This 207-nucleotide RNA was probed chemically with 2A3. Values are in units of 0.01, from 0 to 300, in steps of 10. 2A3 adducts were read by reverse transcription with SuperScript II with manganese. Values cover nucleotides 27 to 156. The reactions ran in a buffer of 150 mM KOAc, 10 mM MgCl2 and 150 mM bicine (pH 8.5), at 24 C.

RNA sequence: GGGAACGACUCGAGUAGAGUCGAAAAAGAGGGGACAACCACCCGAUCCGCCUCGGCGGCCGUUCCUGCUAAAAAAAUCUGGCCGAUAGUUGUGUCGGGGUCCCGCUCGUAGGAACCCGGUAACAACGAACGUGCGGCGGCCCGUUAAACGGUGCGCGGAAUAUAGCGUGUUCGCACGCUAUAUUCCAAAAGAAACAACAACAACAAC
Reactivity to 2A3 in 0.01 (KOAc 150mM, MgCl2 10mM, bicine 150mM(pH8.5), 24C), signal-to-noise 1, nucleotides 027 to 156: a000g080a080g050g040g000g050a010c030a100a040c060c010a040c050c000c000g000a090u060c000c040g040c030c000u090c050g080g030c010g000g000c000c000g030u030u050c010c010u030g100c040u110a150a110a000a000a000a000a150u060c080u100g030g000c030c000g080a100u040a040g000u000u000g010u020g020u010c000g000g030g000g000u000c020c000c020g040c060u270c130g040u170a050g000g000a000a030c000c000c000g000g040u090a160a030c030a020a000c000g030a040a000c010g050u130g040c070g000g000c000g010g040c000c020c020g020u100u180a110a060a050c020g010g000u060g040c040g030c010